[RMDB]
RNA sequence: GGGAACGACUCGAGUAGAGUCGAAAAUGUCUUUGGACACGUAAGAAUUGGAGGAAAAUAAAUGUGGAUUUGGGAAACUUUGAGGCCAGCUUGCUUCUUGCAGGCUCAUGAUCAACCAAUCUCACAUCUAGGGUACCGUAUUCGUACGGUACCCUAGAAAAGAAACAACAACAACAAC
Reactivity to 2A3 in 0.01 (KOAc 150mM, MgCl2 10mM, bicine 150mM(pH8.5), 24C), signal-to-noise 5, nucleotides 027 to 126: u040g030u000c020u070u060u200g060g010a020c030a000c100g130u080a130a040g050a240a160u120u120g110g030a090g060g110a100a040a030a070u240a030a110a050u060g010u010g000g020a030u050u050u110g000g000g030a030a140a080c050u040u030u120g020a070g010g100c010c020a030g010c020u030u020g030c010u070u300c040u120u210g000c020a000g010g010c000u000c030a070u130g090a060u050c020a000a040c000c000a000a000u020c080u040c030a010c000a000u000
Reactivity to DMS in 0.01 (KOAc 150mM, MgCl2 10mM, bicine 150mM(pH8.5), 24C), signal-to-noise 1, nucleotides 027 to 126: u000g070u000c000u000u040u060g000g060a000c000a020c300g010u000a120a090g000a110a210u000u000g040g000a130g020g000a040a010a120a070u010a030a080a070u010g020u000g000g010a060u000u020u010g000g030g000a080a110a100c130u000u010u000g000a040g000g080c110c110a080g040c030u000u000g000c010u000u020c230u000u030g000c030a000g000g000c000u000c010a070u000g000a110u000c000a070a170c000c000a000a000u000c000u000c000a000c000a100u000